[RMDB]
RNA sequence: GGGAACGACUCGAGUAGAGUCGAAAAGCUAUAACUGAAGUCAUGGAAGUGAGUCAGUGAAAUUCUUUCGAGUUAGGGACAGGGAAAGUCUUGCAAGUGUGUAUUUGUCCCCUUGAGAGGUGUGGACAGUUUUUUACACAAUAAUACAACAUACAAACCUCGCAUGGAUCUUCGGAUCCAUGCGAGGAAAAGAAACAACAACAACAAC
Reactivity to 2A3 in 0.01 (KOAc 150mM, MgCl2 10mM, bicine 150mM(pH8.5), 24C), signal-to-noise 1, nucleotides 027 to 156: g000c000u030a000u010a050a020c000u000g000a000a000g000u010c000a000u100g070g030a000a000g010u000g000a000g010u000c020a000g010u000g160a120a070a070u120u010c000u010u020u030c040g010a010g010u000u110a080g010g000g040a000c030a030g000g070g000a010a080a050g050u030c030u030u010g010c020a030a070g060u000g000u000g000u060a100u050u050u010g050u000c030c000c000c010u010u050g070a090g020a040g090g000u040g060u250g070g020a010c000a000g010u000u060u000u060u060u220a050c020a020c000a010a000u120a120a070u130a060c060a050a010c010a160u220a070c020a130a130a030